The data come from the RNA Mapping Database (RMDB), library RFM100. An RNA of 177 nucleotides, treated with DMS and 2A3 and read out base by base. The DMS profile rests on 2,578 reads. The reactions ran in a buffer of 150 mM KOAc, 10 mM MgCl2 and 150 mM bicine (pH 8.5), at 24 C. 2A3 adducts were read by reverse transcription with SuperScript II with manganese.
RNA sequence: GGGAACGACUCGAGUAGAGUCGAAAACCGCAAGGUUUCUGGCCUGAAGGCCAGACCGUAUUCUGCGGUUCGCGCGUCGAACCGUAACCGGCAAGUCCGGAUUUAAACCGGCCGGUGCACUCACCGGAAAGUCAUCGAGUUUCGACUCGAUGACUUUAAAAGAAACAACAACAACAAC
Reactivity to DMS in 0.01 (KOAc 150mM, MgCl2 10mM, bicine 150mM(pH8.5), 24C), signal-to-noise 2, nucleotides 027 to 126: c020c000g030c300a100a180g000g000u000u020u000c000u020g000g010c000c000u000g030a230a130g000g000c000c010a010g020a040c020c010g000u060a050u020u020c170u040g000c000g000g000u000u010c000g000c030g050c200g000u020c000g000a000a030c000c020g010u000a000a040c030c010g030g010c110a180a240g020u030c010c000g050g010a100u010u010u020a070a080a170c110c070g000g030c000c010g000g040u000g000c250a140c290u010c000a050c000c000g040g000
Reactivity to 2A3 in 0.01 (KOAc 150mM, MgCl2 10mM, bicine 150mM(pH8.5), 24C), signal-to-noise 3, nucleotides 027 to 126: c000c000g000c080a050a050g020g000u000u170u000c000u000g000g000c000c050u150g180a270a110g020g000c010c000a010g020a000c000c000g010u030a210u140u090c080u100g000c010g000g000u000u020c000g000c010g020c030g190u300c000g030a010a000c000c000g000u010a080a130c000c000g020g050c130a100a040g070u070c000c000g010g000a020u040u150u120a160a150a060c010c000g050g000c000c010g000g000u020g000c060a060c140u080c000a000c000c000g020g010